[RMDB]
RNA sequence: GGGAACGACUCGAGUAGAGUCGAAAAGAAGCGGCGAAAAAUGCGUGUAAAUAAAAGGUCUAUAUGACCUGACAGUGAUACCAAAUUAAAUGGGUCGAAGUCUCGCCAAAAUACGCAACAAAUAGAAUUGAAUCUUGCUUUUCGAAGCAAGAUUCAAAAAAGAAACAACAACAACAAC
Reactivity to DMS in 0.01 (KOAc 150mM, MgCl2 10mM, bicine 150mM(pH8.5), 24C), signal-to-noise 1, nucleotides 027 to 126: g000a080a050g030c150g000g000c020g040a010a100a010a130a120u020g000c010g010u000g000u020a040a070a040u000a060a070a150a000g010g040u000c020u030a070u000a070u000g000a000c010c000u000g000a050c030a060g000u060g000a020u000a200c010c000a030a120a200u000u010a040a130a080u000g000g000g020u020c040g030a160a150g000u000c010u000c000g000c000c050a090a030a060a080u000a050c020g000c040a050a140c180a090a040a060u030a030g000a090a140